Background:
This 207-nucleotide RNA was probed chemically with 2A3. 2A3 adducts were read by reverse transcription with SuperScript II with manganese. Reactivities are given for positions 27 through 156.
RNA sequence: GGGAACGACUCGAGUAGAGUCGAAAAAAAACUGCAACUAUUCAAGAGAUUUGCCUCCCGUGGGGCACGCCUUUUUUCGUUGCGAAAUAAAACAUGUCCUUUAUUCCCGCUCCUGGAUUGUGUUUCUUGCGCGAUGAUAUGGCUAUGACAAUUAAAAGAUUAGUUCACAGUUCGCUGUGAACUAAUCAAAAGAAACAACAACAACAAC
Reactivity to 2A3 in 0.01 (KOAc 150mM, MgCl2 10mM, bicine 150mM(pH8.5), 24C), signal-to-noise 2, nucleotides 027 to 156: a000a000a000a000c030u060g000c010a000a040c030u040a030u040u070c050a040a020g100a030g040a220u070u000u110g020c000c020u000c060c030c050g060u260g000g020g000g000c050a030c020g000c000c000u010u000u010u000u010u020c020g040u040u010g000c010g060a020a040a090u120a010a060a020a000c060a030u080g030u040c010c000u040u060u060a050u080u040c000c000c030g010c000u030c010c080u050g010g020a060u030u070g010u000g000u030u030u060c050u030u080g010c040g000c020g010a030u050g010a020u060a030u140g020g030c000u070a060u200g020a020c050a060a090u300u300a030a290a000a010

Source: RMDB library RFM130, as collected in RNAgym.